The data come from the RNA Mapping Database (RMDB), library OK1LIB. Structure probing data (2A3 and DMS) for a 177-nucleotide construct. 2A3 adducts were read by reverse transcription with SuperScript II with manganese. For DMS the reverse transcriptase was MarathonRT. The DMS profile rests on 1,202 reads.
RNA sequence: GGGAACGACUCGAGUAGAGUCGAAAAUGAUUGACCAGUCUUUGAUUGAACCCUUAGCAGGAGCCCUUGGUCUGAUCUCUGAUUGGCUGCUAACAACCAACACUAACCAUUUCAACAUGCGAACACAGAUGCGUAAUCCUUUCGAGGAUUACGCAUCAAAAGAAACAACAACAACAAC
Reactivity to 2A3 in 0.01 (KOAc 150mM, MgCl2 10mM, bicine 150mM(pH8.5), 24C), signal-to-noise 4, nucleotides 027 to 126: u170g020a060u050u110g040a070c010c000a060g050u040c060u070u110u080g090a080u020u080g080a050a060c020c030c000u060u120a060g020c040a030g030g070a010g020c030c010c000u080u090g050g000u020c000u020g030a070u040c030u000c010u020g070a130u040u040g030g020c030u050g030c010u080a060a010c040a060a040c010c010a040a050c040a010c060u040a040a050c000c020a020u030u110u120c070a150a110c040a050u130g050c060g000a130a010c050a000c020a080
Reactivity to DMS in 0.01 (KOAc 150mM, MgCl2 10mM, bicine 150mM(pH8.5), 24C), signal-to-noise 1, nucleotides 027 to 126: u010g000a070u000u000g000a070c000c040a140g000u000c000u000u000u000g060a030u000u000g000a070a020c030c000c080u000u000a020g000c110a170g030g010a150g000c000c000c050u000u020g070g050u000c040u000g000a010u000c050u020c060u000g000a140u000u000g000g000c050u000g000c020u000a000a120c300a040a120c090c020a090a000c150a090c060u050a010a080c060c040a020u020u000u020c000a070a050c050a000u000g000c040g000a050a080c140a060c190a060